[RMDB]
RNA sequence: GGGAACGACUCGAGUAGAGUCGAAAAACACAGUAAAUGUCACCUUUGGAAUCUGGCUUGGUAGAAUUGAAAUAGGCUUCAGUACCUCCUGUCAUUCAGUACCUGUUUUCUUGAACUCCUGACUUCAGGUGAUCUGCCUCGGCCUCCCAGAGUGCUGGCAAUAAUAAAGUUUCGACUUUAUUAUUGCAAAAGAAACAACAACAACAAC
Reactivity to DMS in 0.01 (KOAc 150mM, MgCl2 10mM, bicine 150mM(pH8.5), 24C), signal-to-noise 3, nucleotides 027 to 156: a070c000a100c050a080g020u000a050a100a090u010g010u000c020a070c060c020u010u000u000g020g010a100a100u010c050u000g010g010c020u000u010g030g020u000a080g010a090a140u000u010g020a050a050a090u000a090g020g010c060u010u000c070a090g020u000a080c060c020u010c050c020u010g010u000c030a110u010u000c050a110g010u000a050c040c020u000g010u000u000u000u000c050u000u000g020a060a110c040u000c020c020u000g000a070c050u000u010c020a030g010g030u000g010a080u000c030u000g000c010c000u000c100g030g020c020c010u000c020c020c020a070g000a080g020u000g010c050u000g010
Reactivity to 2A3 in 0.01 (KOAc 150mM, MgCl2 10mM, bicine 150mM(pH8.5), 24C), signal-to-noise 6, nucleotides 027 to 156: a000c020a010c030a020g100u160a050a160a150u150g030u070c020a050c010c000u050u040u070g040g020a060a080u080c090u080g030g000c030u040u070g050g000u080a040g040a160a110u090u120g020a060a070a020u100a040g040g000c010u130u100c060a050g040u120a120c000c030u060c030c020u050g040u110c030a070u160u040c030a040g040u060a060c020c000u020g040u030u030u070u080c050u060u110g040a080a070c040u050c040c010u060g110a170c020u090u060c110a000g000g000u010g030a040u010c010u020g000c000c000u030c040g030g010c000c020u000c000c010c000a010g010a010g020u050g040c040u030g050
Source information
Conditions: 150 mM KOAc, 10 mM MgCl2 and 150 mM bicine (pH 8.5), 24 C. Structure probing data (DMS and 2A3) for a 207-nucleotide construct. It was measured as part of the RMDB library OK3TST. The 2A3 profile rests on 3,718 reads.